[RMDB]
RNA sequence: GGGAACGACUCGAGUAGAGUCGAAAAGAUAUGGAAUCCCAUAGGGAGCAGGUCGGAAACGACACUGCGAGGAUCUAUGAAGGAUUCCUAAGUCAAAGCUUGAUGUGAGUUCGCUCACAUCAAGCAAUCUGUAUAAAUGGUUCGCCAUUUAUACAGAAAAAGAAACAACAACAACAAC
Reactivity to DMS in 0.01 (KOAc 150mM, MgCl2 10mM, bicine 150mM(pH8.5), 24C), signal-to-noise 7, nucleotides 027 to 126: g000a040u000a300u000g000g000a010a000u000c000c000c010a020u000a010g000g000g000a030g020c000a010g010g010u000c000g010g000a110a100a170c010g010a010c000a090c000u000g010c000g000a060g010g010a030u010c000u000a000u000g010a140a130g010g000a010u000u000c000c000u000a010a080g010u000c040a100a120a150g010c000u000u000g000a000u000g010u000g000a020g010u000u010c240g010c000u000c000a000c000a000u000c000a000a000g010c000a010a020
Reactivity to 2A3 in 0.01 (KOAc 150mM, MgCl2 10mM, bicine 150mM(pH8.5), 24C), signal-to-noise 7, nucleotides 027 to 126: g020a010u070a040u180g000g000a000a000u000c010c010c000a010u010a000g010g020g000a020g010c010a000g020g010u010c020g020g040a060a080a070c020g040a020c160a150c290u000g000c000g010a070g010g000a010u000c010u010a020u030g130a280a210g000g000a000u010u000c000c000u010a130a020g050u020c060a120a060a080g000c000u000u000g000a000u010g010u000g010a010g020u050u220c300g050c140u000c000a000c000a000u000c000a000a000g000c000a000a000